The data come from the RNA Mapping Database (RMDB), library OK3TST. Structure probing data (DMS and 2A3) for a 207-nucleotide construct.

[RMDB]
RNA sequence: GGGAACGACUCGAGUAGAGUCGAAAAAGUGGACGAUACAUUACACCGAGCAAUUAAAUUACAGUCCACGCUCGGCCAUUAUUCUGGCGAGAGCCAGUUCACAGACAGCUAGCGAAAGGAAGGACCUAGCAGGAAGGAAGGAGCUAGCGCUAGGGCACCUAUUACGCCGAUUCGUCGGCGUAAUAGGAAAAGAAACAACAACAACAAC
Reactivity to DMS in 0.01 (KOAc 150mM, MgCl2 10mM, bicine 150mM(pH8.5), 24C), signal-to-noise 1, nucleotides 027 to 156: a090g080u000g000g020a000c030g000a270u010a110c100a230u000u000a200c030a060c000c070g000a110g020c000a200a220u020u010a030a050a150u000u020a040c100a150g060u000c010c050a120c020g060c080u000c010g010g000c010c040a080u010u000a090u000u020c030u020g030g000c010g010a300g030a300g070c020c000a040g010u000u010c080a040c080a150g030a050c060a120g030c020u000a000g000c030g010a080a040a160g000g000a090a030g000g000a090c080c020u000a090g040c030a090g000g000a070a000g010g000a100a100g030g030a030g000c100u000a060g000c060g040c060u000a030g000g020g020c040a080
Reactivity to 2A3 in 0.01 (KOAc 150mM, MgCl2 10mM, bicine 150mM(pH8.5), 24C), signal-to-noise 3, nucleotides 027 to 156: a000g010u030g010g010a020c030g040a060u100a160c080a130u200u120a050c050a030c050c010g020a010g000c010a040a130u190u180a190a080a040u130u120a180c090a060g010u010c000c000a010c010g000c000u020c010g000g000c010c000a080u190u190a110u190u110c010u000g000g000c000g000a080g010a010g020c000c000a000g000u090u120c100a090c010a030g090a040c010a020g030c010u040a010g010c040g090a110a050a010g060g040a050a070g030g010a030c000c000u000a000g010c030a020g010g040a060a000g040g010a020a020g010g010a010g000c020u050a010g000c010g000c040u030a000g000g010g000c020a030
2A3 adducts were read by reverse transcription with SuperScript II with manganese.